[RMDB]
RNA sequence: GGGAACGACUCGAGUAGAGUCGAAAAUUUGAUAUUUAGUGAGUUAUGGCAACACGCAUCACCAACCAAAAAUUGUCUAAAAGUAGUCGUGCGUGGAUGAGGGAACAUCUAGACGAUCCUUUUGUAACCGUAUCCCGUGAUUCGUCACGGGAUACGGAAAAGAAACAACAACAACAAC
Reactivity to 2A3 in 0.01 (KOAc 150mM, MgCl2 10mM, bicine 150mM(pH8.5), 24C), signal-to-noise 2, nucleotides 027 to 126: u060u040u090g080a020u020a050u190u080u070a110g010u050g020a010g030u020u060a040u120g070g000c020a020a020c050a030c020g060c000a010u020c000a000c010c020a000a060c010c000a030a000a000a040a080u180u070g070u030c030u120a000a020a000a100g010u090a020g050u030c020g040u060g110c050g040u100g070g020a070u060g060a060g040g070g010a040a030c000a060u010c030u050a020g010a030c010g000a020u030c000c020u020u050u020u030g090u100a000a100
Reactivity to DMS in 0.01 (KOAc 150mM, MgCl2 10mM, bicine 150mM(pH8.5), 24C), signal-to-noise 1, nucleotides 027 to 126: u000u020u000g020a110u010a070u000u000u000a080g000u010g020a070g000u000u000a040u020g090g000c060a050a210c060a040c040g010c040a020u000c250a020c010c040a000a070c100c090a050a100a140a090a100u000u020g020u060c130u000a000a070a090a040g000u000a040g010u000c160g000u000g000c040g000u020g020g030a020u000g020a020g000g000g000a050a060c070a070u010c010u000a100g000a060c050g000a040u020c120c070u000u000u000u020g050u040a160a090